Annotation:
The record gives the reactivity of an RNA of 177 nucleotides to 2A3 and DMS. The data come from the RNA Mapping Database (RMDB), library OK1LIB. For DMS the reverse transcriptase was MarathonRT. Conditions: 150 mM KOAc, 10 mM MgCl2 and 150 mM bicine (pH 8.5), 24 C.

RNA sequence: GGGAACGACUCGAGUAGAGUCGAAAAGAGUAAAUAGAGGAGUCAGGGUUCGCACCCGCUCCGCGAACCUAGGGUAACACUGACUCUGGAGCGCAAGAGAGAGCAGACGAAGAUACGUCUGCAUAGAGGUAGCACCAUGAUUCGUCAUGGUGCUACCAAAAGAAACAACAACAACAAC
Reactivity to 2A3 in 0.01 (KOAc 150mM, MgCl2 10mM, bicine 150mM(pH8.5), 24C), signal-to-noise 3, nucleotides 027 to 126: g090a000g020u220a080a170a090u260a070g080a040g060g000a000g000u020c070a040g060g010g000u030u040c030g000c030a070c030c040c000g030c000u000c000c000g000c000g000a020a020c030c020u100a070g030g000g180u100a040a050c020a060c080u050g000a000c000u000c010u020g010g020a010g040c060g010c050a170a000g070a010g020a000g030a020g030c020a000g020a000c010g060a080a040g070a170u150a250c030g000u010c000u000g000c000a000u010a010g050a010
Reactivity to DMS in 0.01 (KOAc 150mM, MgCl2 10mM, bicine 150mM(pH8.5), 24C), signal-to-noise 2, nucleotides 027 to 126: g000a070g030u020a020a190a100u000a130g010a220g040g020a030g040u000c050a100g040g020g000u000u010c000g030c010a220c010c010c070g000c050u010c060c240g000c080g010a000a040c010c010u040a160g000g000g060u000a030a030c130a270c080u000g000a010c000u000c030u000g020g000a100g020c060g040c300a070a010g000a090g000a210g000a160g000c000a000g000a010c000g020a250a090g040a150u060a040c010g000u000c000u000g050c000a000u010a040g000a170